[RMDB]
RNA sequence: GGGAACGACUCGAGUAGAGUCGAAAACUAGUGCCAUUCGUGGCACUAGAAGGGGUCCAGCCUGGAAAGGCUGGAGGUAUUGGAAUGGUCGGGCCGGCAUUCAAGGUACGCUAUUCGUAGCGUACAAUAUCGGAAUGCAUUUCGAUGCAUUCCGAUAAAAAGAAACAACAACAACAAC
Reactivity to 2A3 in 0.01 (KOAc 150mM, MgCl2 10mM, bicine 150mM(pH8.5), 24C), signal-to-noise 1, nucleotides 027 to 126: c000u000a000g000u000g010c010c020a030u050u090c150g080u080g000g000c000a000c000u010a000g010a000a020g000g040g030g020u000c000c000a000g000c000c000u080g080g130a150a070a000g020g020c000u000g000g020a000g000g000u040a090u040u170g100g080a090a070u060g050g030u050c030g000g000g060c020c040g020g000c000a030u070u000c050a070a050g170g000u000a000c000g000c000u020a020u030u080c200g070u040a010g000c000g010u010a000c000a010a010
Reactivity to DMS in 0.01 (KOAc 150mM, MgCl2 10mM, bicine 150mM(pH8.5), 24C), signal-to-noise 2, nucleotides 027 to 126: c000u000a010g010u000g000c020c000a020u000u010c180g020u000g020g030c000a000c000u000a010g010a140a070g000g000g010g000u000c010c010a020g010c040c000u000g040g000a100a140a010g000g000c000u000g000g000a010g000g030u010a030u000u000g010g000a090a050u000g000g000u000c050g020g000g000c110c070g000g000c080a060u000u000c100a130a120g000g000u000a000c020g020c000u000a010u000u020c150g020u000a000g010c000g030u000a010c020a050a070